[RMDB]
RNA sequence: GGGAACGACUCGAGUAGAGUCGAAAAAAUGGCCAUUGUAAGAGUAGAAGGAUCCAUGAAGCAAUAAUUCUCUUUGCUAAAAUGUGUGAUAAAACAUUGACUCCUGGUAUUUCACUCUUACAGUGCCCAGAGCCUCUCUGUUCGCAGAGAGGCUCUGAAAAGAAACAACAACAACAAC
Reactivity to DMS in 0.01 (KOAc 150mM, MgCl2 10mM, bicine 150mM(pH8.5), 24C), signal-to-noise 1, nucleotides 027 to 126: a090a010u010g050g000c080c000a060u000u000g000u000a000a010g000a050g080u000a120g030a010a010g000g000a210u000c000c010a070u030g000a080a010g000c000a000a000u000a070a130u100u000c080u040c120u000u000u000g000c020u000a000a020a010a010u070g000u000g030u020g000a290u000a180a010a160a000c030a000u000u000g000a250c300u000c000c010u040g000g000u000a160u070u000u000c000a110c000u000c000u000u000a000c000a010g020u000g000c300c060
Reactivity to 2A3 in 0.01 (KOAc 150mM, MgCl2 10mM, bicine 150mM(pH8.5), 24C), signal-to-noise 2, nucleotides 027 to 126: a000a010u070g000g010c120c000a020u000u000g000u000a000a000g000a000g000u040a050g010a010a010g030g010a070u090c020c000a010u010g010a040a000g010c010a010a040u070a080a140u300u000c090u020c000u100u030u000g050c040u140a110a130a110a040u140g050u020g040u010g060a090u170a210a040a000a000c020a000u040u040g050a090c000u010c000c030u000g000g000u000a010u000u040u000c000a000c030u000c000u000u000a000c000a000g020u000g040c000c000